[RMDB]
RNA sequence: GGGAACGACUCGAGUAGAGUCGAAAAGAUAUGGAUGGUGUGGCGAGCUAUGAAGUCGGAAACGAUGGAGCUCCCACCCAUCCUAAGUCAAAACAGCCGUCUACCACUUCGGUGGUAGACGGCUGAACAAUGUACCUAGGUUCGCCUAGGUACAUUGAAAAGAAACAACAACAACAAC
Reactivity to DMS in 0.01 (KOAc 150mM, MgCl2 10mM, bicine 150mM(pH8.5), 24C), signal-to-noise 4, nucleotides 027 to 126: g010a050u000a300u010g000g000a000u000g020g000u010g040u000g000g010c230g000a010g020c000u000a250u010g010a090a210g010u000c000g020g010a140a100a240c020g010a010u000g010g000a010g010c010u000c000c000c000a020c000c010c000a000u000c010c010u000a000a060g000u000c040a080a070a100a220c020a000g010c000c000g000u000c000u000a010c000c000a010c000u000u010c220g020g000u000g010g020u000a000g020a000c000g000g000c000u000g000a000a060
Reactivity to 2A3 in 0.01 (KOAc 150mM, MgCl2 10mM, bicine 150mM(pH8.5), 24C), signal-to-noise 4, nucleotides 027 to 126: g010a010u060a040u120g000g010a000u000g000g030u250g020u000g220g080c280g060a010g000c000u050a230u300g020a050a010g020u000c000g000g030a090a060a040c010g000a000u010g020g060a000g020c000u000c030c000c000a000c000c010c010a000u000c000c000u010a000a010g000u000c010a010a000a090a180c000a010g000c010c020g010u000c010u010a010c000c020a010c050u090u150c300g130g010u000g040g000u020a000g020a000c000g010g040c000u010g000a000a000